[RMDB]
RNA sequence: GGGAACGACUCGAGUAGAGUCGAAAAAUAAAGACCACGUCUUAGGGAAGAGCAUUUUCCAGACCGGCAGAGCAAGCAGCCGGGAAAGGCCCUGAGAAGAACACGUCCUUGGCGGUUUGGGAGAAUGGAACGAUCUACAUUUCGAUGUAGAUCGUUCAAAAGAAACAACAACAACAAC
Reactivity to 2A3 in 0.01 (KOAc 150mM, MgCl2 10mM, bicine 150mM(pH8.5), 24C), signal-to-noise 1, nucleotides 027 to 126: a020u160a000a030a020g030a040c000c000a020c050g010u000c040u030u070a050g020g030g020a070a000g060a080g070c030a110u130u050u020u000c000c000a020g030a050c000c000g020g020c040a040g030a070g130c000a060a030g010c010a020g010c040c000g000g010g050a070a120a020g040g030c010c000c020u050g010a050g000a060a010g040a000a010c060a000c100g020u040c000c030u020u090g040g000c010g090g010u050u100u050g040g030g000a060g040a070a030u130g050
Reactivity to DMS in 0.01 (KOAc 150mM, MgCl2 10mM, bicine 150mM(pH8.5), 24C), signal-to-noise 2, nucleotides 027 to 126: a100u010a030a060a090g010a220c010c020a160c110g010u000c020u000u000a090g010g000g020a120a030g000a170g040c080a060u000u000u000u010c000c020a080g000a170c020c040g020g000c010a100g020a140g020c140a100a110g040c050a130g000c010c020g000g000g000a040a110a090g020g000c050c040c020u000g000a070g000a060a060g000a040a070c150a040c170g000u000c020c050u000u010g030g030c050g020g010u000u010u000g010g030g000a050g000a080a100u000g030
Conditions: 150 mM KOAc, 10 mM MgCl2 and 150 mM bicine (pH 8.5), 24 C. Chemical mapping of a 177-nucleotide RNA with 2A3 and DMS. For DMS, 1,167 sequencing reads were counted. It was measured as part of the RMDB library OK2TST.